RNA sequence: GGGAACGACUCGAGUAGAGUCGAAAAGGGCGCUUCGGCGCCCAAAAAGAUAUGGAAAUUUGUCAGGCAAAGAACUACAGAUCGUACAUCGGAAACGAUGUACAUCUGCUUUGCCUUGGAUUUAAUUUCCUAAGUCAAAAACUGGAUUCGUCCAGAAACUGAAUAUGAACUUCGGUUCAUAUUCAGUAAAAGAAACAACAACAACAAC
Reactivity to 2A3 in 0.01 (KOAc 150mM, MgCl2 10mM, bicine 150mM(pH8.5), 24C), signal-to-noise 2, nucleotides 027 to 156: g040g010g060c010g010c050u090u130c270g090g020c010g020c000c000c010a000a030a010a300a020g000a000u060a010u070g000g000a000a010a010u000u000u010g030u020c040a050g000g000c000a000a020a010g000a060a050c100u230a090c300a010g010a000u060c090g020u000a000c000a000u000c000g010g030a040a000a030c010g000a000u000g000u000a010c000a000u010c000u000g000c000u020u000u000g010c000c010u000u040g000g000a000u150u200u150a020a010u000u020u000c000c000u000a030a000g030u010c020a030a010a070a190a220c000u020g000g000a010u070u080c140g040u010c100c010a020g090a070a120
Reactivity to DMS in 0.01 (KOAc 150mM, MgCl2 10mM, bicine 150mM(pH8.5), 24C), signal-to-noise 1, nucleotides 027 to 156: g040g030g100c000g040c030u000u020c150g050g050c030g060c000c000c000a000a010a030a040a120g030a160u000a220u000g000g000a040a030a030u000u010u010g010u010c010a040g030g000c000a010a020a110g070a130a210c040u000a300c000a000g010a010u000c120g040u000a000c000a000u000c000g000g010a180a110a240c010g020a040u000g000u000a000c000a000u000c000u000g000c000u000u000u000g010c000c010u010u000g020g010a000u010u010u000a030a000u020u000u000c000c000u010a070a160g030u000c010a080a100a040a110a090c000u000g020g000a100u000u020c280g040u000c000c000a020g000a100a080